[RMDB]
RNA sequence: GGGAACGACUCGAGUAGAGUCGAAAAAAUGGACUCGCUGGGACGCCUGAGAGCCAAGUAUGGAGAAAUCUGAAGCGCGCACGGAUUUCGAUGAAAUACACGGCUCUCGCCGUCCUGUGCUGAAGCGCGCACGGCAACCGAAAGGUGCGACAGAGAAGUUGUAUUAUUUGUUCGCAAAUAAUACAACAAAAGAAACAACAACAACAAC
Reactivity to DMS in 0.01 (KOAc 150mM, MgCl2 10mM, bicine 150mM(pH8.5), 24C), signal-to-noise 3, nucleotides 027 to 156: a140a100u000g000g020a200c080u000c000g050c020u010g020g000g030a010c000g010c050c000u030g010a040g000a030g050c000c010a130a300g020u000a030u000g010g000a100g020a050a040a000u000c000u000g020a090a090g010c010g060c000g010c030a300c030g000g000a020u000u000u000c000g020a190u010g020a170a140a030u000a010c020a230c300g020g010c010u000c010u010c030g020c040c000g000u000c000c000u010g010u000g020c000u000g010a070a070g000c020g030c010g040c010a300c020g020g000c020a050a080c030c010g020a060a050a110g050g000u010g010c010g000a070c060a090g000a120g000a120a190
Reactivity to 2A3 in 0.01 (KOAc 150mM, MgCl2 10mM, bicine 150mM(pH8.5), 24C), signal-to-noise 3, nucleotides 027 to 156: a000a020u130g040g010a040c020u000c020g000c000u000g000g000g000a000c020g030c080c180u300g000a000g000a000g000c000c010a000a040g010u000a010u020g000g010a010g000a010a000a000u000c000u010g040a180a040g010c000g000c010g000c000a010c000g000g010a000u010u020u000c040g070a270u010g000a000a010a000u010a000c020a010c000g010g000c000u000c000u000c000g020c000c000g000u000c000c000u000g000u000g000c000u020g020a100a040g000c000g000c000g000c010a030c010g010g020c010a010a010c010c000g040a050a040a020g000g000u000g010c000g020a010c050a030g160a000g050a220a020